[RMDB]
RNA sequence: GGGAACGACUCGAGUAGAGUCGAAAACGAAGGGCAACGUCAUCGACCCUCUCGAACUGAUGGACGAAUAUGGCGCAGAUGCCUUGCGCUUCACGCUGGCCAUCAUGGCAGCGCAGGGGCGUGACGAAUUUUAUCGUGGAUUCGUCCACGAUAAAAUAAAAGAAACAACAACAACAAC
Reactivity to 2A3 in 0.01 (KOAc 150mM, MgCl2 10mM, bicine 150mM(pH8.5), 24C), signal-to-noise 6, nucleotides 027 to 126: c030g040a070a040g040g010g000c040a140a120c070g060u010c010a030u060c030g060a170c010c020c000u020c010u010c020g140a240a140c090u090g000a030u130g000g020a000c010g030a080a040u180a090u140g020g000c010g000c040a030g030a170u080g010c010c000u010u050g010c020g000c000u020u030c010a020c020g000c020u070g160g110c020c000a090u180c050a090u200g020g020c030a010g020c020g000c100a080g000g000g000g000c010g010u020g020a020c040g050a030
Reactivity to DMS in 0.01 (KOAc 150mM, MgCl2 10mM, bicine 150mM(pH8.5), 24C), signal-to-noise 9, nucleotides 027 to 126: c070g020a110a070g010g010g020c030a090a140c020g000u010c020a060u010c040g000a090c030c010c010u000c040u000c050g010a110a130c150u000g000a020u000g010g010a100c020g020a140a110u010a160u000g000g010c010g000c080a080g020a180u000g010c070c030u000u000g010c010g000c000u000u000c060a180c070g000c040u000g010g020c010c010a100u000c140a090u010g010g010c070a050g000c050g020c150a060g000g010g000g000c010g020u000g010a070c140g010a070
An RNA of 177 nucleotides, treated with 2A3 and DMS and read out base by base.
The 2A3 profile rests on 13,190 reads.
The reactions ran in a buffer of 150 mM KOAc, 10 mM MgCl2 and 150 mM bicine (pH 8.5), at 24 C.
The data come from the RNA Mapping Database (RMDB), library OK2TST.
For DMS the reverse transcriptase was MarathonRT.